Chemical mapping of a 207-nucleotide RNA with 2A3.

RNA sequence: GGGAACGACUCGAGUAGAGUCGAAAAACAACAGAUAGCUGGAACCAGCGUAGAAUUCUACGCAUAUCCAUAGCGAAUGGUACCUGUAAAGAAAAUAAUGACUCAUGUACAAGUACCAACAGGAGUCAAUGCCAUGGUGAUGUCAAUCACAUAUGCACCAUGCCAGUGGUUUCGACCACUGGCAUGGAAAAGAAACAACAACAACAAC
Reactivity to 2A3 in 0.01 (KOAc 150mM, MgCl2 10mM, bicine 150mM(pH8.5), 24C), signal-to-noise 1, nucleotides 027 to 156: a010c030a010a010c000a050g070a050u300a020g000c010u000g050g000a120a020c070c100a120g010c000g000u000a000g000a140a300u200u160c000u000a010c000g010c000a000u050a010u000c000c000a010u030a080g000c000g050a040a000u000g040g000u010a010c000c000u060g030u100a080a220a000g120a040a060a050a000u220a060a100u090g050a000c000u000c040a020u080g000u110a030c020a020a020g000u100a120c080c000a010a020c030a050g000g000a000g050u000c030a040a150u050g060c100c000a040u090g060g090u000g000a010u000g000u120c040a070a050u040c010a000c000a000u100a030u050g040c000a060
Source: RMDB library OK3TST, as collected in RNAgym. The RNA was probed in 150 mM KOAc, 10 mM MgCl2 and 150 mM bicine (pH 8.5) at 24 C. For 2A3, 414 sequencing reads were counted.